RNA sequence: GGGAACGACUCGAGUAGAGUCGAAAAGGCGCAGUGCUGCGCGAGACUCUAUGCCCGUGACAGAGUGGUAUCAGAGCAGACUUGCUUUACAUCAAUGCCCAGCAGUUCACUCGAUGAUGCACAACUCGAUAUCUAGUCGGUUCGCCGACUAGAUAUCAAAAGAAACAACAACAACAAC
Reactivity to DMS in 0.01 (KOAc 150mM, MgCl2 10mM, bicine 150mM(pH8.5), 24C), signal-to-noise 2, nucleotides 027 to 126: g030g020c010g010c040a090g000u020g010c180u000g010c010g000c010g010a110g010a030c020u000c020u000a030u010g000c030c050c010g000u020g000a140c170a100g000a060g000u000g010g000u010a020u000c130a100g000a060g020c050a060g000a090c070u000u000g010c040u000u010u000a060c100a110u000c150a060a050u000g010c020c040c050a100g020c020a040g000u010u000c070a130c020u000c040g010a110u000g010a020u000g040c050a060c090a060a040c110u010c080
Reactivity to 2A3 in 0.01 (KOAc 150mM, MgCl2 10mM, bicine 150mM(pH8.5), 24C), signal-to-noise 3, nucleotides 027 to 126: g160g000c030g000c050a030g080u150g300c140u010g000c100g000c030g010a060g020a020c000u000c020u010a020u070g100c000c000c070g080u080g030a060c080a080g120a020g040u060g010g000u040a010u070c030a020g010a020g000c060a020g070a100c010u040u190g000c000u070u150u110a070c010a060u130c050a080a230u160g030c070c010c010a010g010c010a010g030u060u080c040a010c040u040c010g070a110u110g010a030u090g000c030a060c020a170a090c020u030c060

The record gives the reactivity of an RNA of 177 nucleotides to DMS and 2A3. The RNA was probed in 150 mM KOAc, 10 mM MgCl2 and 150 mM bicine (pH 8.5) at 24 C. For DMS, 1,569 sequencing reads were counted. Reactivities are given for positions 27 through 126.